[RMDB]
RNA sequence: GGGAACGACUCGAGUAGAGUCGAAAAAAGCGAUUCAUGUGAUGUGCGUACAUCUGGGCCUGCGUGAGGCGCACCGUCAGGCGCAGCUUGCGAUGCUCGCCGAAUGGGUGAAUGAGCUACCGGACGGGUAUGCCAAUCUGUUCGCAGAUUGGCAUACAAAAGAAACAACAACAACAAC
Reactivity to DMS in 0.01 (KOAc 150mM, MgCl2 10mM, bicine 150mM(pH8.5), 24C), signal-to-noise 3, nucleotides 027 to 126: a090a060g020c030g000a080u000u010c050a050u000g020u010g010a050u010g030u010g000c140g000u010a100c050a040u000c040u000g010g010g000c050c020u000g030c070g010u000g010a130g020g020c040g020c050a100c060c020g000u000c080a090g000g010c030g010c160a030g020c040u030u010g020c180g020a100u000g000c030u000c020g010c050c030g020a110a040u010g000g000g010u010g030a060a100u000g010a080g010c010u000a110c050c010g000g000a070c070g010g010
Reactivity to 2A3 in 0.01 (KOAc 150mM, MgCl2 10mM, bicine 150mM(pH8.5), 24C), signal-to-noise 2, nucleotides 027 to 126: a000a000g050c050g000a050u070u040c050a040u120g050u060g300a080u110g080u120g020c020g070u090a010c020a110u010c030u060g050g030g020c030c040u020g000c040g050u060g040a040g040g000c020g030c130a070c010c040g060u070c030a020g010g040c010g020c010a010g010c030u030u060g010c060g050a030u130g000c010u010c020g000c010c000g060a120a070u140g080g000g000u040g030a020a050u050g020a000g000c020u050a050c010c010g030g040a020c020g120g020

An RNA of 177 nucleotides, treated with DMS and 2A3 and read out base by base.
The RNA was probed in 150 mM KOAc, 10 mM MgCl2 and 150 mM bicine (pH 8.5) at 24 C.
The data come from the RNA Mapping Database (RMDB), library OK2TST.
For 2A3, 2,256 sequencing reads were counted.